About this RNA: An RNA of 177 nucleotides, treated with 2A3 and DMS and read out base by base.

[RMDB]
RNA sequence: GGGAACGACUCGAGUAGAGUCGAAAAGAUAUGGAGGAUCCGUUUUGCCAUCGAUCAACAAUCGGAAACGAUUGUUGGGAGGCAUCACGGAGUCCUCCUAAGUCAAAACGGUUACUUCGGUAACCGACAUACGUUAUCGCUUCGGCGAUAACGUAUGAAAAGAAACAACAACAACAAC
Reactivity to 2A3 in 0.01 (KOAc 150mM, MgCl2 10mM, bicine 150mM(pH8.5), 24C), signal-to-noise 3, nucleotides 027 to 126: g040a040u080a040u190g000g010a000g010g000a010u000c010c000g010u000u000u000u040g010c020c030a300u300c100g050a110u050c020a010a010c000a000a000u000c040g040g030a100a060a030c010g000a000u000u000g010u000u000g020g010g010a020g000g000c000a010u010c010a010c020g030g000a020g010u040c000c010u000c000c000u000a000a000g020u010c050a020a010a090a130c010g010g010u010u020a010c020u030u080c300g100g000u010a000a000c000c000g010a000
Reactivity to DMS in 0.01 (KOAc 150mM, MgCl2 10mM, bicine 150mM(pH8.5), 24C), signal-to-noise 3, nucleotides 027 to 126: g000a050u010a300u000g010g010a020g020g010a300u000c000c000g020u000u000u000u000g020c000c000a300u000c200g000a080u000c010a020a030c000a000a030u000c010g000g020a130a120a150c010g040a010u000u000g000u020u000g010g000g020a020g000g000c000a020u000c050a020c000g010g010a040g010u010c000c000u010c000c010u000a010a060g010u000c050a070a070a110a170c020g020g020u000u000a000c000u000u020c180g030g010u000a010a020c000c000g010a140
2A3 adducts were read by reverse transcription with SuperScript II with manganese.
For 2A3, 6,166 sequencing reads were counted.